[RMDB]
The record gives the reactivity of an RNA of 177 nucleotides to DMS. Conditions: 150 mM KOAc, 10 mM MgCl2 and 150 mM bicine (pH 8.5), 24 C.
RNA sequence: GGGAACGACUCGAGUAGAGUCGAAAAGAUAUGGAACGUCCUCCCCACCAAUAUGAUGCCGUUGAAACCUUGUUCUCGGAAACGAGAACAAGGUGGAGGCAUCAGUAUUGAGGGACGUUCCUAAGUCGUCUUAUGAUCCGUUCGCGGAUCAUAAGACAAAAGAAACAACAACAACAAC
Reactivity to DMS in 0.01 (KOAc 150mM, MgCl2 10mM, bicine 150mM(pH8.5), 24C), signal-to-noise 1, nucleotides 027 to 126: g010a070u020a020u020g020g000a020a010c000g010u010c010c000u000c030c000c000c070a300c050c000a000a010u000a020u000g000a030u000g000c000c000g030u020u000g010a120a300a010c000c010u010u000g020u000u000c010u010c010g040g000a050a020a060c000g000a020g000a020a000c010a000a000g010g010u000g000g000a030g010g010c030a000u010c000a000g010u000a010u000u000g000a230g000g000g000a010c010g000u000u000c000c000u000a010a090g010u000c090